[RMDB]
The record gives the reactivity of an RNA of 207 nucleotides to DMS and 2A3.
RNA sequence: GGGAACGACUCGAGUAGAGUCGAAAAUAUUUCGGACAAUUACCGCGAGUGGCACGGAACAUACUAUCGGCUGUCACUCAUGCCGCCAUUGGAAUCACCAUCUGGGACACCACGUGGAAAAGCAUCUACAGAACUCGUGUACACUUAAUAUUAAUGGCUAAUAGUUUCCAUUCGUGGAAACUAUUAGAAAAGAAACAACAACAACAAC
Reactivity to DMS in 0.01 (KOAc 150mM, MgCl2 10mM, bicine 150mM(pH8.5), 24C), signal-to-noise 3, nucleotides 027 to 156: u000a100u000u000u000c010g020g020a130c060a100a090u010u000a070c030c030g010c080g010a030g050u000g010g000c010a060c020g010g010a090a150c110a150u000a100c110u000a090u000c030g030g020c040u000g040u010c020a060c040u010c010a090u000g040c030c040g020c050c080a180u010u000g000g000a110a100u000c050a090c050c030a100u000c060u010g010g030g010a090c040a100c020c030a060c090g020u000g020g000a060a070a080a120g010c030a090u000c010u000a190c020a070g010a040a090c050u010c030g040u000g020u000a080c060a030c040u000u020a040a100u000a120u000u000a060a080u010g000g000
Reactivity to 2A3 in 0.01 (KOAc 150mM, MgCl2 10mM, bicine 150mM(pH8.5), 24C), signal-to-noise 8, nucleotides 027 to 156: u180a050u050u090u110c030g020g000a020c040a120a110u090u050a080c050c050g030c060g030a010g010u010g010g000c020a010c030g060g030a100a040c070a160u190a120c100u150a120u180c020g060g000c080u020g030u060c020a010c050u040c000a010u090g010c010c010g010c010c010a020u030u070g020g050a060a050u090c030a040c080c010a040u050c090u100g020g010g020a020c020a030c070c000a030c050g020u030g020g000a040a090a010a000g030c010a040u040c020u090a060c030a060g060a070a050c040u030c070g030u020g040u130a050c050a000c050u080u090a090a040u100a090u230u230a080a060u160g080g000